[RMDB]
RNA sequence: GGGAACGACUCGAGUAGAGUCGAAAAGAUAUGGAGACACGUGCUCGAUAAGAUAUGUGUCGGAAACGACACUUAUCUUUUGACGAGCCCGUGUCUCCUAAGUCAAAGAAGUUCUUCGGAACUUCAACAUGUAUCCCUAGUUCGCUAGGGAUACAUGAAAAGAAACAACAACAACAAC
Reactivity to DMS in 0.01 (KOAc 150mM, MgCl2 10mM, bicine 150mM(pH8.5), 24C), signal-to-noise 6, nucleotides 027 to 126: g000a030u010a300u000g000g000a020g010a010c000a010c000g010u000g000c000u000c010g020a200u000a020a010g010a010u000a010u000g020u000g020u010c000g020g000a090a070a190c010g010a010c000a000c000u000u000a000u000c000u000u000u010u010g020a190c180g010a020g000c000c040c000g010u000g000u000c000u000c000c000u000a000a050g010u010c040a110a150a160g010a020a010g010u000u000c000u000u020c230g020g000a010a010c000u000u000c000a110a250
Reactivity to 2A3 in 0.01 (KOAc 150mM, MgCl2 10mM, bicine 150mM(pH8.5), 24C), signal-to-noise 3, nucleotides 027 to 126: g020a000u070a030u120g010g010a000g000a020c000a010c010g020u020g000c000u010c030g110a090u060a220a000g000a000u000a010u020g000u000g010u010c020g000g000a050a050a000c000g000a000c000a010c000u010u000a000u000c000u030u050u050u100g280a180c090g010a010g000c020c000c000g010u010g000u000c000u000c000c000u000a000a000g000u000c000a000a010a050g000a000a000g000u010u010c000u050u110c300g100g000a000a000c000u000u010c010a000a030